[RMDB]
Background
Conditions: 150 mM KOAc, 10 mM MgCl2 and 150 mM bicine (pH 8.5), 24 C. An RNA of 177 nucleotides, treated with DMS and read out base by base. DMS adducts were read by reverse transcription with MarathonRT.
RNA sequence: GGGAACGACUCGAGUAGAGUCGAAAAGAUAUGGAUAAUCCAGUAUGCUAUGGCUUCUUUUGACGCGGAUUACUCGGAAACGAGUAAAUCGCGAUAAGAAGCAUAGCAUACUGGAUUAUCCUAAGUCCUAAUCAAGACUCUUCGGAGUCUUGAUUAGAAAAGAAACAACAACAACAAC
Reactivity to DMS in 0.01 (KOAc 150mM, MgCl2 10mM, bicine 150mM(pH8.5), 24C), signal-to-noise 1, nucleotides 027 to 126: g000a100u000a250u020g010g000a030u000a010a000u000c010c000a020g000u000a010u000g010c000u020a000u000g010g000c000u000u000c000u000u000u000u000g040a230c080g010c000g040g000a090u000u000a000c000u000c000g030g000a120a160a230c000g030a010g020u000a010a000a030u010c000g030c000g040a080u000a010a040g010a030a010g010c010a000u000a000g010c030a010u000a000c000u000g000g010a000u000u000a000u000c010c000u000a000a080g000u020c020